About this RNA: Chemical mapping of a 207-nucleotide RNA with 2A3.
RNA sequence: GGGAACGACUCGAGUAGAGUCGAAAAAGUUUCUCGAUAAUUGAUCUGUAGAAUCUGUCAAGCAAAACCACAAAACCUUACACUGAGAGCAUUUAGCCUGAUUACUCUUUAAAUCAAAUCAGGCAAUUCAAGGUCGCAGUCUUCGGACUGCGACCAAGUGAUAAUCGUUGUUCGCAACGAUUAUCACAAAAGAAACAACAACAACAAC
Reactivity to 2A3 in 0.01 (KOAc 150mM, MgCl2 10mM, bicine 150mM(pH8.5), 24C), signal-to-noise 2, nucleotides 027 to 156: a010g000u010u040u010c020u020c010g020a090u050a150a140u210u130g020a010u040c100u170g080u120a020g040a130a060u000c040u070g030u080c040a060a030g030c050a020a020a010a180c070c040a060c030a050a100a050a090c040c040u130u160a050c050a020c140u250g070a000g000a000g000c020a030u010u000u020a000g010c000c000u000g000a000u010u020a010c000u010c000u150u300u050a000a040a000u160c120a000a000a000u000c010a000g000g000c000a020a000u040u020c020a010a080g010g010u000c020g010c000a000g000u010c000u000u000c020g070g000a000c000u000g000c010g000a000c000c010a000a000
The RNA was probed in 150 mM KOAc, 10 mM MgCl2 and 150 mM bicine (pH 8.5) at 24 C. High 2A3 reactivity points to a flexible backbone, as in loops and unpaired stretches.